[RMDB]
RNA sequence: GGGAACGACUCGAGUAGAGUCGAAAAUGGUACGCAGCCUGGCGCUAUUCGUCAACGCGCUACAUCAGGACGACCAACAGUUCGUCGCGUUGAACAAGAACCUUGCGGAGUUCACCGACAGGUUGACAGCAAGACAACCCUUCGGGGUUGUCUUGCUAAAAGAAACAACAACAACAAC
Reactivity to DMS in 0.01 (KOAc 150mM, MgCl2 10mM, bicine 150mM(pH8.5), 24C), signal-to-noise 1, nucleotides 027 to 126: u000g010g000u040a110c140g000c050a030g060c000c030u100g050g000c080g040c040u000a010u030u140c230g010u000c000a000a090c080g090c050g050c300u030a050c010a060u040c180a210g000g000a000c000g000a000c090c080a110a100c080a050g000u000u000c000g000u040c000g000c090g080u000u000g000a040a210c020a130a170g000a080a050c000c000u030u060g000c040g000g000a300g000u000u040c180a090c230c020g000a060c110a010g000g010u000u000g000a070c030
Reactivity to 2A3 in 0.01 (KOAc 150mM, MgCl2 10mM, bicine 150mM(pH8.5), 24C), signal-to-noise 1, nucleotides 027 to 126: u100g000g000u110a000c010g000c040a000g000c000c000u000g020g000c000g020c000u240a160u100u100c040g040u000c020a000a000c000g000c000g060c060u040a030c000a150u030c050a000g160g000a000c000g110a050c130c210a050a260c000a120g040u090u000c000g050u020c020g000c000g000u000u000g050a050a000c020a030a000g000a040a000c000c000u170u300g020c000g030g010a040g140u000u070c000a010c080c000g200a120c010a050g000g000u080u030g090a130c020